Conditions: 150 mM KOAc, 10 mM MgCl2 and 150 mM bicine (pH 8.5), 24 C. The record gives the reactivity of an RNA of 207 nucleotides to 2A3. It was measured as part of the RMDB library OK3TST. The 2A3 profile rests on 553 reads. 2A3 adducts were read by reverse transcription with SuperScript II with manganese.

RNA sequence: GGGAACGACUCGAGUAGAGUCGAAAAUCUGCUUUAUUGUUUUUGUUACAUAUAGUGUUAGAUUCUUUACAUGUAAACAAUCAUGGUUCUCACUUGCUGUGACAACUAUUUUUGUGAUCUUUAACAUGGUUAAAGUAUUUGGAACAUCUGAUGAACCGGUGUGAGUCUAAUUCGUUAGACUCACACCAAAAGAAACAACAACAACAAC
Reactivity to 2A3 in 0.01 (KOAc 150mM, MgCl2 10mM, bicine 150mM(pH8.5), 24C), signal-to-noise 1, nucleotides 027 to 156: u040c040u150g070c070u170u210u050a020u050u000g100u050u020u030u010u010g080u050u120a110c020a040u140a020u070a240g010u010g000u000u030a010g050a050u000u120c010u010u040u010a030c020a010u010g010u050a070a070a000c000a010a000u030c010a020u030g050g000u030u010c030u020c000a000c030u070u170g100c180u190g040u000g010a000c000a020a010c010u030a020u020u000u000u020u030g010u070g020a180u110c160u100u230u040a100a000c020a020u020g040g150u010u170a000a000a000g050u040a090u000u060u090g010g040a040a020c010a040u100c080u040g090a100u020g050a090a070c160c090